[RMDB]
RNA sequence: GGGAACGACUCGAGUAGAGUCGAAAAUAAACGGAUAUCGUAAUCCGGUGCUGUGUGUGGUACCUGGUUUGGAUACCAGAGAGGUUAGGAGACAGCUUCUAAAGAUUUAUCUUGGCGAGGGGAAACCAUUAAUAUUCAGCUUCGGCUGAAUAUUAAUAAAAGAAACAACAACAACAAC
Reactivity to 2A3 in 0.01 (KOAc 150mM, MgCl2 10mM, bicine 150mM(pH8.5), 24C), signal-to-noise 6, nucleotides 027 to 126: u080a020a080a010c040g000g010a040u030a020u100c090g070u120a060a040u000c000c020g000g010u010g000c010u030g010u110g040u040g060u110g090g000u020a020c000c000u030g050g000u030u040u110g160g020a040u060a050c010c010a000g010a010g000a010g110g060u120u100a030g010g040a030g010a050c050a040g060c010u030u010c020u070a090a090a000g040a030u060u190u140a090u090c050u040u090g030g010c030g030a030g000g010g010g020a040a030a010c000c000
Reactivity to DMS in 0.01 (KOAc 150mM, MgCl2 10mM, bicine 150mM(pH8.5), 24C), signal-to-noise 8, nucleotides 027 to 126: u030a040a100a140c050g020g000a050u010a040u010c090g010u010a110a050u000c010c030g000g010u010g020c020u010g010u030g020u010g010u020g000g010u010a050c080c010u000g010g010u000u010u030g010g000a080u010a030c040c030a080g010a110g010a060g000g000u000u010a080g010g000a090g010a120c150a130g000c030u000u010c050u000a070a060a060g000a110u020u020u010a040u020c030u010u010g000g020c040g010a070g000g000g010g000a080a060a070c120c070